[RMDB]
RNA sequence: GGGAACGACUCGAGUAGAGUCGAAAAGACUAUGGGCAGCCAAGCUCUAAAAGCCUCCUUGGCUCAAGAGUGCAGUUCACAGACUAAAUGGCAGUGGGUGUCCGCCUCCCCAGGCGGAUGCUUAAGAUAUAGUCGGUCCCCAUCGAGAGGUGGACCGCAUAGACCAGGGGUUCGCCCCUGGUCUAUGAAAAGAAACAACAACAACAAC
Reactivity to DMS in 0.01 (KOAc 150mM, MgCl2 10mM, bicine 150mM(pH8.5), 24C), signal-to-noise 1, nucleotides 027 to 156: g010a040c070u000a020u000g000g050g050c030a040g060c000c070a080a300g000c040u060c000u000a030a120a120a070g050c010c000u040c300c170u010u000g090g060c040u020c010a230a040g000a040g030u000g030c060a070g020u010u010c040a070c060a160g020a150c020u000a010a070a060u000g030g040c040a090g030u000g000g010g010u010g010u010c000c000g000c010c000u000c070c090c040c070a250g000g000c000g010g000a000u000g010c010u010u010a020a070g050a190u000a110u000a100g010u000c010g050g020u000c010c020c000c020a140u000c110g040a150g010a120g010g010u000g030g010a040c000c050g010
Reactivity to 2A3 in 0.01 (KOAc 150mM, MgCl2 10mM, bicine 150mM(pH8.5), 24C), signal-to-noise 2, nucleotides 027 to 156: g030a010c050u050a060u070g000g050g070c030a030g040c010c010a050a030g010c010u000c000u030a100a220a020a030g010c000c000u170c030c060u170u300g000g030c000u000c050a040a020g010a020g040u090g010c060a010g010u060u110c070a040c030a070g060a010c040u050a110a090a030u060g020g000c020a040g020u150g040g010g000u020g000u000c000c010g010c010c000u050c020c000c000c000a000g000g020c000g000g000a000u010g010c010u000u030a060a030g060a020u110a010u040a200g050u040c000g000g000u010c020c000c000c000a040u150c120g160a180g000a020g070g030u160g030g010a020c000c010g020
Chemical mapping of a 207-nucleotide RNA with DMS and 2A3. DMS adducts were read by reverse transcription with MarathonRT. Conditions: 150 mM KOAc, 10 mM MgCl2 and 150 mM bicine (pH 8.5), 24 C. Source: RMDB library RSTRND, as collected in RNAgym. Reactivities are given for positions 27 through 156. For 2A3 the reverse transcriptase was SuperScript II with manganese.